[RMDB]
RNA sequence: GGGAACGACUCGAGUAGAGUCGAAAAAAAAAAAUUUGGAACGUUAACAUCGGAAAACCCGCAUUGCGUUAUUGUCAACCUCACAAUUUCGCUGUGAGUGUUCCCAUGUUAGCUCCCAUUAAAAAAACAUGCUUAACUUGUUCGCAAGUUAAGCAUGAAAAGAAACAACAACAACAAC
Reactivity to DMS in 0.01 (KOAc 150mM, MgCl2 10mM, bicine 150mM(pH8.5), 24C), signal-to-noise 1, nucleotides 027 to 126: a000a000a000a130a200a070a180u010u000u000g000g030a070a020c090g010u000u010a000a010c000a000u000c300g010g000a020a030a050a020c000c000c000g000c030a030u010u040g030c000g020u000u000a000u000u010g010u010c120a060a090c290c100u000c160a040c000a020a020u000u010u000c020g040c020u000g070u000g000a010g010u010g010u010u000c000c010c090a020u020g000u000u000a030g000c010u000c080c010c010a030u010u010a020a010a110a090a030a010a170
Reactivity to 2A3 in 0.01 (KOAc 150mM, MgCl2 10mM, bicine 150mM(pH8.5), 24C), signal-to-noise 1, nucleotides 027 to 126: a000a000a000a040a000a000a000u110u010u030g000g000a030a000c010g000u000u000a010a000c010a010u040c020g030g000a030a020a030a050c020c000c030g000c020a000u040u250g010c010g020u010u010a020u000u000g030u030c020a080a120c110c030u110c010a000c000a000a010u000u050u000c000g000c020u020g000u010g030a040g000u020g030u020u000c000c010c010a000u050g000u000u020a020g000c010u040c030c010c010a070u170u250a080a080a010a000a010a000a010
The record gives the reactivity of an RNA of 177 nucleotides to DMS and 2A3. The 2A3 profile rests on 1,593 reads. 2A3 adducts were read by reverse transcription with SuperScript II with manganese. The DMS profile rests on 823 reads. For DMS the reverse transcriptase was MarathonRT.